[RMDB]
RNA sequence: GGGAACGACUCGAGUAGAGUCGAAAAUGCCGGAAGGCUACUAUACCGUGCCGCUCGGCAAGGCCGCGAUCCGCCGCGAAGGCAGCGAUGUGACGGUGCUGGCCUAUGGCACCAUGGUUCAUGUGGACAGUCAUGAUGAUUUCGAUCAUCAUGACUGAAAAGAAACAACAACAACAAC
Reactivity to DMS in 0.01 (KOAc 150mM, MgCl2 10mM, bicine 150mM(pH8.5), 24C), signal-to-noise 5, nucleotides 027 to 126: u010g030c000c000g020g030a140a120g010g010c000u000a040c070u000a180u010a070c080c060g010u000g010c010c010g010c140u010c210g000g010c010a060a040g000g010c020c010g020c050g010a050u000c030c020g030c020c020g020c060g010a150a120g000g000c020a010g000c030g000a060u000g010u000g020a130c020g010g010u000g030c040u010g000g010c010c020u010a120u010g000g010c000a020c030c220a060u010g000g000u000u000c110a060u000g010u000g010g000a300
Reactivity to 2A3 in 0.01 (KOAc 150mM, MgCl2 10mM, bicine 150mM(pH8.5), 24C), signal-to-noise 4, nucleotides 027 to 126: u120g000c000c000g050g080a110a040g030g030c000u000a010c010u050a040u060a080c030c040g000u020g000c010c000g040c040u110c030g010g000c000a000a010g010g000c000c000g000c000g020a010u020c030c020g010c020c000g050c110g090a110a060g090g000c030a020g020c060g050a030u050g120u090g210a110c020g000g040u140g300c040u030g040g020c010c000u040a080u060g000g000c040a000c050c030a090u110g060g000u070u120c070a050u180g040u070g150g030a020
Chemical mapping of a 177-nucleotide RNA with DMS and 2A3. DMS (dimethyl sulfate) methylates the pairing face of unpaired adenines and cytosines. The data come from the RNA Mapping Database (RMDB), library OK2TST. The reactions ran in a buffer of 150 mM KOAc, 10 mM MgCl2 and 150 mM bicine (pH 8.5), at 24 C. For 2A3, 4,843 sequencing reads were counted.